Source: RMDB library M2PK50, as collected in RNAgym. Structure probing data (DMS and 2A3) for a 177-nucleotide construct. For 2A3 the reverse transcriptase was SuperScript II with manganese. For DMS, 1,803 sequencing reads were counted. Values cover nucleotides 27 to 126. For DMS the reverse transcriptase was MarathonRT.
RNA sequence: GGGAACGACUCGAGUAGAGUCGAAAACCCCAUAAUUUCGAUUAUGGGGAAAGGAAAACAGGCUAGGACCGGCCUGAUAAUGGUCCGAACAAAUAAUUAAAAUCUAGGUUGUAUUCGUACAACCUAACUAUGAAAACGGAUUCGUCCGUUUUCAUAGAAAAGAAACAACAACAACAAC
Reactivity to DMS in 0.01 (KOAc 150mM, MgCl2 10mM, bicine 150mM(pH8.5), 24C), signal-to-noise 2, nucleotides 027 to 126: c000c010c000c010a000u010a000a000u000u010u020c140g010a060u010u010a000u010g010g000g000g020a020a070a060g020g010a080a050a100a230c200a010g030g000c020u010a150g000g010a040c010c000g010g020c000c010u000g010a060u010a040a060u010g000g020u010c000c020g010a100a050c190a050a090a050u010a090a150u010u020a060a060a090a120u000c120u000a010g020g000u000u000g020u010a010u000u010c160g010u000a000c000a000a010c000c000u000a020a030
Reactivity to 2A3 in 0.01 (KOAc 150mM, MgCl2 10mM, bicine 150mM(pH8.5), 24C), signal-to-noise 2, nucleotides 027 to 126: c000c000c000c000a020u010a010a010u020u070u100c190g060a010u010u020a000u010g000g010g000g040a110a020a060g100g020a020a090a050a110c080a040g000g000c000u110a110g040g020a000c000c010g000g000c000c020u030g050a020u190a050a050u090g010g000u000c020c000g010a020a000c020a030a100a010u230a130a070u270u240a080a110a040a070u080c050u040a020g000g000u000u000g000u000a030u050u100c230g010u030a000c000a000a000c000c000u000a000a020